This 207-nucleotide RNA was probed chemically with 2A3. The 2A3 profile rests on 563 reads. 2A3 adducts were read by reverse transcription with SuperScript II with manganese. High 2A3 reactivity points to a flexible backbone, as in loops and unpaired stretches.
[RMDB]
RNA sequence: GGGAACGACUCGAGUAGAGUCGAAAACCACCUGGAAAGCCAUCAAAACAGGUGGAGCCGUCACCGUAGGAACGCUCUUUGGGCUUGCAAGUCAAAACGGCUGGAAACCAGAAGAAGACGACUACUACCAGGAAACCGAAGCCGAGCGCAUCGCCCGCCGUUAAAGGGAUUUCGAUCCCUUUAACGGAAAAGAAACAACAACAACAAC
Reactivity to 2A3 in 0.01 (KOAc 150mM, MgCl2 10mM, bicine 150mM(pH8.5), 24C), signal-to-noise 1, nucleotides 027 to 156: c000c020a000c000c000u000g020g010a220a060a030g070c010c040a250u130c080a150a100a080a120c000a020g000g020u010g010g000a000g070c050c010g070u050c150a040c050c000g070u080a020g000g100a140a040c100g060c040u060c010u100u140u100g010g000g000c000u020u000g080c030a170a030g000u090c070a000a010a000a180c010g030g000c030u010g080g040a100a030a050c040c010a050g020a040a000g020a000a050g100a040c050g100a020c010u060a010c000u080a050c080c000a060g010g000a210a100a020c020c030g010a050a000g000c050c000g000a050g000c020g010c000a030u080c010g000c000c010c000g090